[RMDB]
RNA sequence: GGGAACGACUCGAGUAGAGUCGAAAAGAUAUGGAAUCGAUAGCUGCAAUGAUGUGUGGGAGAACUCGGAAACGAGACCCACAUUGAGCAGGUCGAUUCCUAAGUCAAAGCAUCGUUCGCGAUGCAACGUUGGUCUAGUCUUCGGACUAGACCAACGAAAAGAAACAACAACAACAAC
Reactivity to DMS in 0.01 (KOAc 150mM, MgCl2 10mM, bicine 150mM(pH8.5), 24C), signal-to-noise 1, nucleotides 027 to 126: g000a020u000a300u000g000g020a000a000u000c000g010a000u010a180g070c020u000g000c010a270a210u000g010a060u020g000u000g000u000g000g010g000a180g000a080a090c010u010c000g020g020a030a070a160c020g020a050g010a040c000c010c010a000c000a000u000u000g000a160g000c010a010g000g000u000c000g000a020u000u000c010c000u020a000a040g000u000c050a070a080a050g010c020a000u000c000g050u000u000c160g000c000g000a020u000g000c000a020a040
Reactivity to 2A3 in 0.01 (KOAc 150mM, MgCl2 10mM, bicine 150mM(pH8.5), 24C), signal-to-noise 2, nucleotides 027 to 126: g020a020u010a030u070g000g010a020a000u020c010g000a010u060a210g300c000u040g000c000a040a300u100g020a030u020g000u000g000u000g020g050g010a190g090a230a100c040u000c030g000g040a020a050a040c010g000a010g120a110c020c000c000a010c000a000u010u000g000a010g000c000a000g000g000u000c010g010a000u010u000c000c000u000a000a010g020u010c000a140a040a040g020c000a000u020c010g070u110u190c300g000c010g160a020u010g040c030a040a060